[RMDB]
The record gives the reactivity of an RNA of 207 nucleotides to DMS and 2A3. DMS adducts were read by reverse transcription with MarathonRT. The reactions ran in a buffer of 150 mM KOAc, 10 mM MgCl2 and 150 mM bicine (pH 8.5), at 24 C. For 2A3, 1,435 sequencing reads were counted.
RNA sequence: GGGAACGACUCGAGUAGAGUCGAAAAUCAUUGAGAUGCUGGGCGCUAUGGUCGUCCUCCUCCGGCUGACCUCCUUCUCAGCUGCUGACCGGCGCCGCACAGGCGGCAUCUCAGAUUCGUGUGCAAAAAAAGAAUGGUCGGUUCGCCGACCAUUCAAGGUAUACAUUAACUUCGGUUAAUGUAUACCAAAAGAAACAACAACAACAAC
Reactivity to DMS in 0.01 (KOAc 150mM, MgCl2 10mM, bicine 150mM(pH8.5), 24C), signal-to-noise 2, nucleotides 027 to 156: u000c080a150u000u000g020a030g010a010u000g010c010u000g030g010g020c000g040c020u010a050u010g050g020u010c010g010u000c020c040u000c030c010u000c040c010g010g010c000u020g000a040c070c110u010c140c140u000u000c080u000c010a030g020c000u010g040c060u010g010a030c010c020g020g010c010g050c000c010g000c050a050c080a110g020g030c060g000g020c000a000u000c010u010c010a040g010a070u000u000c050g020u010g000u010g000c020a010a000a070a130a100a120a190g000a020a000u000g000g000u000c000g000g020u000u000c300g010c030c000g020a010c000c000a000u000u000c000a050a080
Reactivity to 2A3 in 0.01 (KOAc 150mM, MgCl2 10mM, bicine 150mM(pH8.5), 24C), signal-to-noise 2, nucleotides 027 to 156: u110c010a030u070u130g010a010g000a000u000g000c000u040g020g030g010c020g000c020u080a150u300g020g000u020c010g080u080c040c050u020c010c010u060c030c000g000g000c000u000g010a020c020c060u170c010c040u250u080c040u010c020a000g000c010u020g050c100u090g000a000c000c010g010g000c030g010c000c000g020c020a030c010a010g200g000c000g010g010c000a000u000c000u000c010a000g000a020u140u180c150g050u060g020u070g170c120a130a090a000a020a020a000a000g000a010a010u010g000g010u000c000g000g030u040u070c220g000c090c000g000a000c000c000a000u000u000c000a000a000